[RMDB]
RNA sequence: GGGAACGACUCGAGUAGAGUCGAAAACUCCCUCACGACAACAAAGUUGGUAUUUUCCAAAAGAGUCUAAUUGUUGACAUGAUGGUGUAUGGAUUUUUCCUUGGAGUCGUUAGUCUUAUGACUUGGGUUGUCAUAAUGUAUGGAUUCGGUACAGGCAUAAUUUAUAGUAGUUCGCUACUAUAAAUUAAAAAGAAACAACAACAACAAC
Reactivity to 2A3 in 0.01 (KOAc 150mM, MgCl2 10mM, bicine 150mM(pH8.5), 24C), signal-to-noise 2, nucleotides 027 to 156: c020u040c020c020c000u060c030a050c030g060a030c010a100a030c000a010a130a070g020u050u030g050g000u050a110u060u160u080u120c050c020a060a090a030a030g070a040g030u020c040u100a090a100u080u080g030u030u030g010a040c010a070u080g010a080u070g040g050u010g030u090a080u090g050g000a050u030u080u040u060u180c000c010u000u050g080g040a020g020u030c050g020u090u070a020g010u000c010u060u190a120u120g050a040c000u040u030g120g050g050u090u040g030u030c010a020u090a120a050u090g070u060a060u110g030g040a070u150u090c030g050g010u090a040c020a020g100g030c110a070
Reactivity to DMS in 0.01 (KOAc 150mM, MgCl2 10mM, bicine 150mM(pH8.5), 24C), signal-to-noise 3, nucleotides 027 to 156: c050u000c010c010c020u010c090a110c050g020a120c020a050a090c020a070a110a170g010u010u000g000g010u000a090u010u010u010u000c040c040a090a080a110a180g010a100g030u000c020u000a060a140u000u000g010u000u010g010a110c050a080u000g010a060u020g000g000u000g010u010a070u010g010g000a100u000u000u020u000u010c020c020u000u010g020g010a110g030u000c040g020u000u000a090g020u000c040u010u000a070u010g010a030c010u000u000g020g010g020u000u000g010u000c030a090u000a050a080u000g020u000a060u000g010g010a150u000u000c090g010g030u020a070c040a070g020g010c020a180

This 207-nucleotide RNA was probed chemically with 2A3 and DMS.
2A3 adducts were read by reverse transcription with SuperScript II with manganese.
It was measured as part of the RMDB library OK3TST.
The RNA was probed in 150 mM KOAc, 10 mM MgCl2 and 150 mM bicine (pH 8.5) at 24 C.